[RMDB]
RNA sequence: GGGAACGACUCGAGUAGAGUCGAAAAGUGUCGGACUCGCAAGUGCGAAUAUAUUUUAUCCCUAAACAGGGAGUGGAAAGCACGUCCUGGAGUGGAAAACUCGUCCAUCCCAAAGCGAGAAAUGAAACAAGUGGCUAUAUUUCGAUAUAGCCACUUGAAAAGAAACAACAACAACAAC
Reactivity to DMS in 0.01 (KOAc 150mM, MgCl2 10mM, bicine 150mM(pH8.5), 24C), signal-to-noise 5, nucleotides 027 to 126: g010u010g040u010c040g030g020a160c020u010c070g030c040a140a140g020u000g020c010g020a090a080u010a120u000a060u010u000u010u000a150u000c010c000c000u000a060a110a120c220a030g010g010g000a020g000u010g000g000a080a100a190g010c010a010c010g010u010c060c060u000g010g020a070g000u010g000g010a090a090a090a100c090u000c050g010u010c030c010a090u000c010c000c000a030a070a100g010c030g000a020g000a080a070a090u010g000a100a130a170
Reactivity to 2A3 in 0.01 (KOAc 150mM, MgCl2 10mM, bicine 150mM(pH8.5), 24C), signal-to-noise 2, nucleotides 027 to 126: g100u100g030u030c000g040g040a030c000u000c000g050c050a110a060g030u040g080c010g080a130a000u100a010u000a050u070u180u070u130a100u050c030c000c000u090a170a200a040c040a070g000g000g030a020g010u050g040g110a110a070a000g140c010a000c000g010u040c010c010u020g050g050a040g030u070g020g020a050a040a050a090c030u030c040g000u030c020c020a090u040c020c000c000a050a040a010g050c000g000a010g050a050a070a040u150g060a110a000a020
Conditions: 150 mM KOAc, 10 mM MgCl2 and 150 mM bicine (pH 8.5), 24 C. This 177-nucleotide RNA was probed chemically with DMS and 2A3. The data come from the RNA Mapping Database (RMDB), library M2PK90. DMS adducts were read by reverse transcription with MarathonRT. The DMS profile rests on 4,452 reads.